[RMDB]
RNA sequence: GGGAACGACUCGAGUAGAGUCGAAAAGUGUUGCUGGGGGUUAUAACGAACUGGCUAAAAUAGCGGCGACAAAAGGGAUGCAGGUGUGCUUACACCAUCAUAUGGGGACGGGCAUUCAAACCGCGGAUGGAUCUAGAAGGUUCGCCUUCUAGAUCCAAAAAGAAACAACAACAACAAC
Reactivity to DMS in 0.01 (KOAc 150mM, MgCl2 10mM, bicine 150mM(pH8.5), 24C), signal-to-noise 1, nucleotides 027 to 126: g050u000g000u000u000g000c010u020g000g010g010g000g000u020u000a030u000a030a090c090g010a030a110c110u000g010g030c020u000a060a020a110a150u000a140g020c000g060g000c070g000a090c180a040a130a060a070g000g000g000a070u010g050c140a160g000g000u000g000u000g010c260u000u000a090c050a040c050c010a060u040c120a020u010a190u000g000g010g020g010a090c220g000g010g010c160a030u030u000c030a020a140a050c040c010g000c090g020g030a080